Annotation:
The record gives the reactivity of an RNA of 207 nucleotides to DMS and 2A3. Reactivities are given for positions 27 through 156.
[RMDB]
RNA sequence: GGGAACGACUCGAGUAGAGUCGAAAAAAGUGAAGGUGGCUUUAACACUAGUGACUUUAUAGGCCGAAAGGGAAGCGGGUUAAAAUUCCUGCACCAUCGAAUGGGAUAUUAGGGUAACCGAUCGUAAUCCGGGACAUCAAUUGGCGGUCGAGGAAGAGUUACCUCAAAUGUUCGCAUUUGAGGUAACAAAAGAAACAACAACAACAAC
Reactivity to DMS in 0.01 (KOAc 150mM, MgCl2 10mM, bicine 150mM(pH8.5), 24C), signal-to-noise 2, nucleotides 027 to 156: a050a040g010u000g000a140a100g010g000u000g010g030c080u000u000u010a070a070c050a080c070u010a050g000u010g020a090c050u010u000u000a110u010a130g030g030c020c000g020a080a060a110g010g010g060a030a130g010c050g020g030g020u000u010a060a080a110a210u020u000c000c020u000g020c050a100c040c000a100u010c050g000a100a050u000g030g000g000a090u000a060u010u000a060g010g000g010u000a120a040c010c010g000a040u000c030g010u000a070a100u000c010c030g010g010g010a070c080a060u000c020a030a150u010u010g020g020c030g010g020u000c050g010a100g010g000a060a130g010a140
Reactivity to 2A3 in 0.01 (KOAc 150mM, MgCl2 10mM, bicine 150mM(pH8.5), 24C), signal-to-noise 3, nucleotides 027 to 156: a000a000g060u050g020a090a020g060g010u020g000g030c060u060u090u120a140a040c040a030c010u060a030g030u010g080a010c000u020u080u030a180u090a130g040g000c060c020g020a060a010a040g000g000g000a070a040g010c010g000g000g060u050u070a000a090a080a060u100u060c000c000u030g030c010a020c030c000a040u090c020g040a070a070u070g010g000g000a030u040a070u110u150a070g020g010g020u040a100a010c020c010g000a030u060c020g020u070a000a070u030c090c000g010g000g000a020c020a040u120c020a030a160u060u020g050g000c000g000g010u000c050g010a020g030g050a030a050g030a010